[RMDB]
RNA sequence: GGGAACGACUCGAGUAGAGUCGAAAAGCACGGACAUCCUUGCGAGCGCCACCUACCGCUGCUCGUGGCAGCGCAAUGAAAGAGGCGGCGGUGGCCCCGACAGCCUCGACGGCCCCCGCGGCGGCCAGCACCAGGAGCCGUUCGCGGUUCCUGGUGCAAAAGAAACAACAACAACAAC
Reactivity to 2A3 in 0.01 (KOAc 150mM, MgCl2 10mM, bicine 150mM(pH8.5), 24C), signal-to-noise 3, nucleotides 027 to 126: g040c020a000c050g040g070a050c030a090u140c030c010u050u080g010c040g020a040g030c040g030c020c010a060c010c010u110a090c000c060g030c030u050g020c010u070c140g130u170g080g000c010a050g000c000g030c050a030a160u210g100a110a070a080g110a040g040g000c020g010g000c000g000g000u020g000g010c000c000c000c000g020a040c040a060g040c010c030u060c040g020a050c040g010g000c000c000c000c010c000g010c040g140g020c010g040g000c010c000a010
Reactivity to DMS in 0.01 (KOAc 150mM, MgCl2 10mM, bicine 150mM(pH8.5), 24C), signal-to-noise 3, nucleotides 027 to 126: g050c020a120c010g010g030a130c050a010u020c010c000u010u000g000c050g000a140g000c050g020c020c040a050c060c010u020a100c140c050g000c020u010g000c000u000c220g010u010g000g000c030a030g020c040g000c180a090a110u020g000a070a130a140g010a140g000g000c000g000g000c230g010g010u000g000g030c030c060c060c010g020a060c110a150g000c120c070u000c000g000a070c240g000g000c010c070c070c010c000g020c020g010g000c040g020g010c010c000a130